The record gives the reactivity of an RNA of 177 nucleotides to DMS and 2A3.
RNA sequence: GGGAACGACUCGAGUAGAGUCGAAAAUAAGUUCUGCAAGCCUUUGGCAAUUCCAGGAUAUGUUUACUUUCCCUUGAUAAGAGAGGAAUUGGAAGGUAAGAGCCAAAUGAAUUCAGAAAUGACAAAGUCUACUCACUACGUUCGCGUAGUGAGUAGAAAAAGAAACAACAACAACAAC
Reactivity to DMS in 0.01 (KOAc 150mM, MgCl2 10mM, bicine 150mM(pH8.5), 24C), signal-to-noise 2, nucleotides 027 to 126: u000a070a150g000u000u000c010u000g000c200a080a090g040c120c060u000u030u000g000g010c020a050a180u010u000c080c070a090g040g040a150u010a070u010g010u000u010u000a060c060u000u000u000c010c010c020u010u010g000a240u010a080a130g000a130g010a080g000g020a030a090u010u010g000g000a070a090g000g000u010a040a060g000a300g010c020c020a010a020a040u000g000a050a150u010u000c020a040g000a000a040a100u000g000a100c180a070a040a120g010
Reactivity to 2A3 in 0.01 (KOAc 150mM, MgCl2 10mM, bicine 150mM(pH8.5), 24C), signal-to-noise 1, nucleotides 027 to 126: u100a100a020g030u000u030c020u040g020c040a030a030g060c020c030u030u030u050g010g060c010a020a060u060u040c010c010a050g010g180a100u080a050u240g130u080u220u070a050c010u000u020u000c010c020c000u000u000g130a110u080a220a030g040a000g010a020g050g050a120a100u090u120g050g020a030a040g010g000u040a020a010g000a020g000c010c000a030a000a010u100g030a000a030u080u060c020a000g040a040a080a030u090g000a000c040a060a120a000g080

Source: RMDB library OK2TRN, as collected in RNAgym. Values are in units of 0.01, from 0 to 300, in steps of 10.